Chemical mapping of a 207-nucleotide RNA with 2A3 and DMS.
Conditions: 150 mM KOAc, 10 mM MgCl2 and 150 mM bicine (pH 8.5), 24 C.
It was measured as part of the RMDB library OK3TST.
For 2A3, 2,753 sequencing reads were counted.
[RMDB]
RNA sequence: GGGAACGACUCGAGUAGAGUCGAAAAUCUGACACUGACAGGAGGCAUAGCUCAGGUUGGUAAUGCUCACUCGCCCACCCAGUGCUCACUUCCUGCUGUGCAGCUGACCCACACUAGUUGGGGGGUGAGGGCCCCUGUAAGAAAUAAGGGAGAUAACAUGACAAGUUUUAUUCGUAAAACUUGUCAUAAAAGAAACAACAACAACAAC
Reactivity to 2A3 in 0.01 (KOAc 150mM, MgCl2 10mM, bicine 150mM(pH8.5), 24C), signal-to-noise 2, nucleotides 027 to 156: u000c000u010g110a050c000a020c050u040g260a130c000a000g000g000a030g000g030c070a210u210a110g010c000u000c030a010g030g000u020u030g000g040u110a140a090u190g080c050u090c120a180c050u060c120g020c000c010c010a030c000c010c000a060g020u030g030c020u020c060a040c000u020u000c000c010u000g000c020u010g010u010g020c000a000g010c020u060g110a130c000c060c000a040c010a010c060u140a080g070u130u120g000g000g000g000g010g000u050g030a060g010g020g000c000c000c000c000u020g040u050a050a060g070a110a100a030u210a040a050g040g060g000a080g050a060u120a100a100c110
Reactivity to DMS in 0.01 (KOAc 150mM, MgCl2 10mM, bicine 150mM(pH8.5), 24C), signal-to-noise 3, nucleotides 027 to 156: u010c020u000g020a150c050a060c010u000g010a100c040a070g000g010a060g020g010c020a090u010a060g040c000u000c050a070g010g040u000u000g030g020u010a060a110u000g000c070u000c090a100c110u000c050g010c040c000c030a010c020c010c010a170g030u000g010c070u000c160a040c020u000u000c020c010u000g010c010u000g030u000g030c010a050g020c050u010g000a110c010c000c040a130c080a100c070u000a070g010u000u000g010g030g010g000g030g000u020g010a100g010g030g030c010c000c000c010u010g020u010a040a150g000a110a090a090u010a080a070g000g020g050a100g020a170u010a080a110c150